[RMDB]
RNA sequence: GGGAACGACUCGAGUAGAGUCGAAAAGUGCAGAGUGAAAUUCAUAGGUGCAGCGCCAAUUUGGCGGAACGACCCGGUACUCCGCGCAGUCGCGCUGUAAACGUUCUGUGUUGGCGUUCAGGCCUCAGAGGUAAUAUUACUUCGGUAAUAUUACCUCAAAAGAAACAACAACAACAAC
Reactivity to DMS in 0.01 (KOAc 150mM, MgCl2 10mM, bicine 150mM(pH8.5), 24C), signal-to-noise 9, nucleotides 027 to 126: g020u020g010c040a040g000a080g020u010g010a090a090a080u030u020c080a090u020a050g010g020u010g010c040a060g000c000g020c010c050a050a060u010u040u030g020g020c010g000g010a010a030c040g000a160c050c030c020g000g000u020a100c100u010c080c050g000c020g010c080a070g010u020c300g000c010g000c020u010g010u010a030a070a150c030g010u000u000c010u000g020u010g010u000u000g010g000c060g010u000u010c130a100g000g000c030c010u010c130a260
Reactivity to 2A3 in 0.01 (KOAc 150mM, MgCl2 10mM, bicine 150mM(pH8.5), 24C), signal-to-noise 2, nucleotides 027 to 126: g150u160g050c020a010g070a100g080u130g100a080a080a150u210u180c070a050u100a110g080g010u030g020c020a000g000c010g000c020c000a020a050u130u090u150g110g000c000g000g010a010a010c020g060a030c010c030c030g020g000u020a070c030u020c020c000g000c020g000c020a030g080u120c060g020c000g000c000u010g010u030a050a070a050c020g000u020u000c020u000g040u020g030u070u130g040g000c030g000u030u100c050a030g000g170c000c010u030c040a010
This 177-nucleotide RNA was probed chemically with DMS and 2A3. It was measured as part of the RMDB library OK1LIB. DMS adducts were read by reverse transcription with MarathonRT. Conditions: 150 mM KOAc, 10 mM MgCl2 and 150 mM bicine (pH 8.5), 24 C. The DMS profile rests on 44,644 reads.